RNA sequence: GGGAACGACUCGAGUAGAGUCGAAAAACUUAAACGGAAGUCAAAUCAAAUAUACCGAUGUUUCUGGUACUGCAUACGUGACUUACAAAGGACGAGAAACAAAAAUCGAAGAAGACAAUUUCAUGCAUACGUAAUCCUCAUUCGUGAGGAUUACGUAAAAAGAAACAACAACAACAAC
Reactivity to DMS in 0.01 (KOAc 150mM, MgCl2 10mM, bicine 150mM(pH8.5), 24C), signal-to-noise 3, nucleotides 027 to 126: a100c110u000u010a030a050a110c160g000g010a040a040g010u000c020a040a120a190u000c110a070a090a100u010a140u000a060c050c010g020a150u000g010u000u010u000c010u000g000g000u000a020c130u000g010c070a080u000a100c210g000u000g030a020c100u000u000a130c070a040a130a080g000g000a090c040g000a080g000a070a060a070c100a070a070a080a070a080u000c050g000a100a060g020a100a070g000a100c140a020a040u010u000u010c120a020u020g030c120a090
Reactivity to 2A3 in 0.01 (KOAc 150mM, MgCl2 10mM, bicine 150mM(pH8.5), 24C), signal-to-noise 2, nucleotides 027 to 126: a000c020u050u060a110a010a020c040g040g020a060a020g020u000c040a000a020a160u050c020a060a170a050u260a030u070a070c020c040g070a100u040g000u010u020u010c000u010g030g030u020a130c030u020g000c040a010u050a090c030g120u040g080a090c000u070u080a040c040a040a070a010g040g000a010c020g020a030g120a060a070a010c090a040a230a000a000a030u070c070g060a030a010g100a040a000g040a040c030a070a100u080u080u060c060a100u080g040c000a050
Structure probing data (DMS and 2A3) for a 177-nucleotide construct. Source: RMDB library OK2TST, as collected in RNAgym. For DMS the reverse transcriptase was MarathonRT. Conditions: 150 mM KOAc, 10 mM MgCl2 and 150 mM bicine (pH 8.5), 24 C.